[RMDB]
RNA sequence: GGGAACGACUCGAGUAGAGUCGAAAAUUAUGCUUGUCGCAAAGCUCUUUCUGUUGUUCUGUAUUCCUGUGAUAAGAUAAGGCAAUUUCAUCAAACACAUUGUCUACCAUGACAGACGACCUCCGCAUUCAUGCCAGCUAGCCAUUUCAGACAAGCAGCAGCAUUUAAUAUUCGUAUUAAAUGCUGCAAAAGAAACAACAACAACAAC
Reactivity to DMS in 0.01 (KOAc 150mM, MgCl2 10mM, bicine 150mM(pH8.5), 24C), signal-to-noise 3, nucleotides 027 to 156: u010u010a080u020g010c020u000u010g000u000c070g040c100a080a100a110g020c010u000c010u000u010u000c000u000g010u000u000g010u010u020c040u000g000u000a150u010u000c020c020u010g010u000g020a100u000a080a090g020a080u000a070a090g000g030c030a040a080u010u000u000c080a150u020c140a110a100a130c080a070c070a100u000u000g010u010c010u000a090c050c060a110u020g010a070c020a080g020a110c050g010a050c040c020u000c030c020g040c080a100u010u000c080a100u000g010c020c030a060g000c050u010a090g010c020c040a140u000u000u010c030a190g010a050c010a030a060g010c010a230
Reactivity to 2A3 in 0.01 (KOAc 150mM, MgCl2 10mM, bicine 150mM(pH8.5), 24C), signal-to-noise 5, nucleotides 027 to 156: u140u090a040u120g000c010u020u020g010u020c020g030c090a090a040a030g020c030u020c020u050u210u040c070u090g030u050u020g040u120u000c000u030g060u070a110u110u120c040c030u040g050u050g110a110u090a100a130g030a060u080a130a030g030g010c020a020a030u060u150u140c110a200u040c050a130a100a040c070a020c000a050u030u020g010u010c000u030a110c040c100a060u160g030a040c010a020g050a040c020g030a020c040c020u060c040c020g010c020a020u050u120c020a020u150g050c030c010a010g020c020u040a010g000c020c030a070u090u130u130c030a040g000a010c000a010a000g020c010a000